RNA sequence: GGGAACGACUCGAGUAGAGUCGAAAACAAGCACCGCAUUACAGAAAAGGACACUCGAUCGCACUCGCUUUCACCUGUUUGGCUUGGGUAAUGUUGGGAACAAAUGCGCUGUAUUGUGCAUGGGAAAGUUUUAAUGGUCAUUCGUGACCAUUAAAACAAAAGAAACAACAACAACAAC
Reactivity to DMS in 0.01 (KOAc 150mM, MgCl2 10mM, bicine 150mM(pH8.5), 24C), signal-to-noise 5, nucleotides 027 to 126: c070a130a100g010c090a080c030c020g000c040a050u000u000a060c060a170g010a070a050a160a120g010g010a080c060a060c050u000c110g000a060u000c070g000c070a090c050u000c120g000c050u010u010u000c080a080c100c070u000g010u010u000u000g000g010c090u010u000g010g000g010u000a040a030u000g010u000u000g030g010g000a070a060c100a040a080a030u000g000c010g030c010u010g010u010a060u020u000g020u000g000c000a040u000g000g010g000a090a060a090
Reactivity to 2A3 in 0.01 (KOAc 150mM, MgCl2 10mM, bicine 150mM(pH8.5), 24C), signal-to-noise 4, nucleotides 027 to 126: c030a060a000g110c010a020c020c020g000c010a010u020u060a030c020a030g120a090a100a030a020g050g020a020c010a000c050u060c040g050a070u040c030g010c030a050c050u060c050g020c010u040u030u020c020a040c030c010u030g050u060u070u060g070g000c030u030u060g100g000g000u030a030a030u070g060u090u200g030g010g010a030a020c010a030a090a020u030g000c010g000c020u030g040u260a220u190u110g010u020g010c010a020u020g020g010g040a110a120a030